[RMDB]
RNA sequence: GGGAACGACUCGAGUAGAGUCGAAAAGUCGUCAGUUUUUCUCCGUGUUGGAUUUAAUUAUGUAGGUCCAAACUAUUCCCCCCCAGUAGGUUAGCUUGCUAAAUAUUCUGUCACUUUUGCGAUCCCAUUCUUCCCUAGAUUUCGAUCUAGGGAAGAAAAAAGAAACAACAACAACAAC
Reactivity to DMS in 0.01 (KOAc 150mM, MgCl2 10mM, bicine 150mM(pH8.5), 24C), signal-to-noise 4, nucleotides 027 to 126: g020u000c110g010u000c030a040g020u000u000u010u010u010c050u010c050c100g020u010g000u020u000g000g000a030u010u010u000a060a110u020u040a110u040g020u000a030g000g000u000c020c030a020a040a060c080u020a210u020u020c010c010c000c020c010c010c010a060g020u000a050g000g010u010u020a060g010c030u010u000g010c020u000a040a080a080u020a080u000u010c030u000g020u000c010a020c020u000u000u000u000g020c150g010a120u000c010c000c010a180
Reactivity to 2A3 in 0.01 (KOAc 150mM, MgCl2 10mM, bicine 150mM(pH8.5), 24C), signal-to-noise 5, nucleotides 027 to 126: g060u050c060g010u010c010a030g000u020u010u030u060u030c090u040c050c080g060u090g110u100u060g010g010a050u060u060u050a180a170u200u240a130u280g190u100a020g010g030u010c000c020a010a040a020c020u030a130u090u080c010c000c000c000c010c010c000a010g040u030a010g030g050u050u040a040g030c020u020u070g020c020u070a090a070a060u140a100u090u000c010u010g020u030c000a020c030u010u020u020u060g040c030g070a090u030c000c010c000a010
This 177-nucleotide RNA was probed chemically with DMS and 2A3. The reactions ran in a buffer of 150 mM KOAc, 10 mM MgCl2 and 150 mM bicine (pH 8.5), at 24 C. DMS (dimethyl sulfate) methylates the pairing face of unpaired adenines and cytosines. The 2A3 profile rests on 2,545 reads.